Source: RMDB library M2RFPK, as collected in RNAgym. This 207-nucleotide RNA was probed chemically with 2A3 and DMS. DMS adducts were read by reverse transcription with MarathonRT. High DMS reactivity at an A or C suggests that its Watson-Crick edge is free. The reactions ran in a buffer of 150 mM KOAc, 10 mM MgCl2 and 150 mM bicine (pH 8.5), at 24 C.

[RMDB]
RNA sequence: GGGAACGACUCGAGUAGAGUCGAAAAAUGGUAGUUAGUCUACUCGCUAUCCUAGUUACUUUGGAGUAAUCUAAAGUGUGUGUAAACGGGUGAAAGUCUGUAAAAUACUGGGGACAUAGGGUCAACAAGAACUAGUAGACCUUCGGGUCUACUAGAACGUGCUAUACAGAUUCGUCUGUAUAGCACGAAAAGAAACAACAACAACAAC
Reactivity to 2A3 in 0.01 (KOAc 150mM, MgCl2 10mM, bicine 150mM(pH8.5), 24C), signal-to-noise 3, nucleotides 027 to 156: a000u080g010g000u020a020g000u080u070a050g030u080c030u050a060c020u030c020g020c010u070a050u090c020c020u040a050g040u080u080a030c020u040u040u010g010g010a020g030u110a140a070u010c010u010a000a030a030g030u050g000u000g010u000g030u090a050a110a050c030g020g000g030u050g070a060a030a010g020u030c060u040g030u080a010a080a040a010u090a060c040u060g010g010g010g000a000c020a030u080a060g050g020g010u050c010a020a020c030a090a090g060a060a030c000u000a000g000u000a000g000a000c000c000u000u030c140g080g000g000u000c000u000a000c000u000a000g000a000a000
Reactivity to DMS in 0.01 (KOAc 150mM, MgCl2 10mM, bicine 150mM(pH8.5), 24C), signal-to-noise 2, nucleotides 027 to 156: a110u000g030g020u000a060g020u010u000a110g020u000c010u000a020c000u000c040g050c090u010a080u000c000c020u000a120g040u000u000a030c020u000u000u000g020g020a060g030u000a140a150u000c010u000a030a020a020g020u000g000u020g000u000g020u000a070a130a090c070g000g000g000u000g010a110a070a120g010u010c050u000g030u010a080a080a050a090u000a050c050u000g020g000g040g020a070c070a110u000a070g020g040g000u000c050a070a090c100a040a120g020a050a200c000u000a020g000u000a030g010a040c020c010u010u020c270g060g040g020u000c000u000a020c010u000a000g000a020a110